Chemical mapping of a 207-nucleotide RNA with 2A3. For 2A3 the reverse transcriptase was SuperScript II with manganese. Reactivities are given for positions 27 through 156. The RNA was probed in 150 mM KOAc, 10 mM MgCl2 and 150 mM bicine (pH 8.5) at 24 C.

RNA sequence: GGGAACGACUCGAGUAGAGUCGAAAAUAAAGAUCAGUGUGGAUGGUGGAGUCCUUAACUGAUUCAGUUUAAGAUAUUUGAUUUUGAUGCAUUUGGGAAUAGGGUGCUCUUGCUGAGAAUAGGGGUUAGGGCUCAAUUUACAAACCUUUCUGUUCCACCCUAAAAUAUCCUUCGGGAUAUUUUAGGGAAAAGAAACAACAACAACAAC
Reactivity to 2A3 in 0.01 (KOAc 150mM, MgCl2 10mM, bicine 150mM(pH8.5), 24C), signal-to-noise 3, nucleotides 027 to 156: u100a010a060a010g030a050u040c030a010g050u010g020u050g040g000a040u050g000g150u110g050g020a050g040u020c020c010u060u070a080a020c010u020g010a060u050u090c020a010g010u020u090u120a130a080g030a030u120a090u130u130u090g090a070u080u090u140u190g010a030u040g030c060a060u030u070u110g050g010g040a110a060u090a100g050g000g010u020g010c000u020c020u070u060g000c030u020g010a010g040a160a110u120a120g040g010g000g050u080u080a010g000g020g000c040u030c030a080a080u090u090u060a060c060a020a150a100c010c010u100u070u010c060u080g040u040u080c020c020a020